[RMDB]
RNA sequence: GGGAACGACUCGAGUAGAGUCGAAAAGGGCCAUUUUUAAUGACCACCAUCUUAAUAGACCUGGUGUCUAUUGUGGCUCUGAUUUUAUUGACAUUGUCAGGCGGUUAGCAGUAUCACUGUUCCAGCCAAGUCUAAGACUUCGGUCUUAGAAAAAGAAACAACAACAACAAC
Reactivity to DMS in 0.01 (KOAc 150mM, MgCl2 10mM, bicine 150mM(pH8.5), 24C), signal-to-noise 9, nucleotides 027 to 129: g000g000g010c000c020a000u000u010u020u020u020a030a080u050g000a040c090c050a030c020c020a100u010c040u000u010a070a070u030a020g000a000c180c150u010g020g000u020g020u020c000u010a020u040u000g000u010g020g020c010u010c010u010g020a090u030u010u010u030a060u050u040g000a040c100a090u000u000g020u010c030a080g030g020c040g000g010u040u030a060g010c020a040g000u000a110u030c190a060c040u000g000u010u000c060c010a130g040c030c030a100a090g030
Reactivity to 2A3 in 0.01 (KOAc 150mM, MgCl2 10mM, bicine 150mM(pH8.5), 24C), signal-to-noise 7, nucleotides 027 to 129: g000g000g000c000c010a030u130u030u020u040u150a150a140u130g010a010c020c020a010c010c000a040u030c010u090u290a250a150u170a190g020a030c060c130u090g020g000u030g010u010c020u030a050u020u040g000u000g000g000c000u000c000u000g030a030u030u070u050u090a160u050u080g030a040c080a090u080u140g050u070c050a030g010g020c010g020g020u060u150a020g010c010a000g000u070a060u250c060a030c070u030g030u060u020c000c000a010g000c020c010a030a010g020